[RMDB]
RNA sequence: GGGAACGACUCGAGUAGAGUCGAAAAGAUGAGGAACCCACCAAUCUCAUCGCAGCAGGGACUAUGGACUCAGCAAGAUCAUCAGGGGCCGACAGCAAAAACCUCCAAGCAUCUGCGGUCGAUGAUAAUAGGAUUUAAAUUUCGAUUUAAAUCCUAUAAAAGAAACAACAACAACAAC
Reactivity to 2A3 in 0.01 (KOAc 150mM, MgCl2 10mM, bicine 150mM(pH8.5), 24C), signal-to-noise 1, nucleotides 027 to 126: g010a020u110g020a040g010g080a100a060c030c010c020a040c000c050a060a120u060c020u010c050a010u010c010g000c020a020g000c020a010g010g030g000a010c020u040a050u170g010g010a010c000u010c110a010g040c050a100a040g030a130u050c010a000u030c040a100g160g030g000g110c030c030g110a140c030a030g040c090a030a050a030a150a220c040c050u010c050c000a050a060g000c000a060u040c010u020g000c010g000g030u060c030g020a030u020g000a000u030a100
Reactivity to DMS in 0.01 (KOAc 150mM, MgCl2 10mM, bicine 150mM(pH8.5), 24C), signal-to-noise 3, nucleotides 027 to 126: g020a040u010g010a050g000g010a060a080c040c010c050a170c130c110a090a080u000c050u010c020a020u000c010g010c110a130g010c060a080g020g000g010a070c090u000a070u010g000g010a090c080u000c040a040g010c060a090a100g020a070u000c020a050u010c050a180g000g010g000g000c140c070g030a060c080a040g030c120a040a070a070a120a080c050c060u000c040c050a050a060g010c090a070u000c030u020g020c040g020g010u000c030g010a050u000g010a080u000a080
Structure probing data (2A3 and DMS) for a 177-nucleotide construct. The DMS profile rests on 2,352 reads.